[RMDB]
RNA sequence: GGGAACGACUCGAGUAGAGUCGAAAAGCGAUCUGAGGUUUUAAUGGAGAUAGCGGUUCCUGCGCAACCCAUUGAUCUUGUUACAUUCUUAAGAAUGACAAGGACGCUUUUAUAAAAUUCUGAUUCUGUCUCAUCUUGAAUUCGUUCAAGAUGAGACAAAAGAAACAACAACAACAAC
Reactivity to DMS in 0.01 (KOAc 150mM, MgCl2 10mM, bicine 150mM(pH8.5), 24C), signal-to-noise 2, nucleotides 027 to 126: g000c000g010a070u000c000u010g000a190g030g000u000u000u050u030a000a040u010g000g010a130g000a080u010a230g000c020g000g000u030u000c170c110u020g010c010g000c020a120a070c050c000c010a050u050u000g000a040u020c000u000u020g020u000u110a070c010a000u000u000c000u020u100a110a000g000a030a000u000g000a020c060a120a160g000g000a030c020g010c000u000u010u000u010a120u000a010a030a160a170u020u000c030u000g020a180u030u020c160u000
Reactivity to 2A3 in 0.01 (KOAc 150mM, MgCl2 10mM, bicine 150mM(pH8.5), 24C), signal-to-noise 7, nucleotides 027 to 126: g000c010g070a300u030c030u080g050a100g080g020u000u050u070u190a030a030u030g000g030a120g030a160u140a070g050c020g020g020u110u160c030c040u070g020c010g000c010a040a050c010c000c000a010u040u020g030a020u020c000u010u030g010u030u050a060c010a020u010u020c020u160u290a160a120g000a030a010u000g000a030c010a010a020g000g000a000c000g000c000u060u030u010u010a200u130a040a120a040a060u110u000c020u030g100a180u130u010c020u060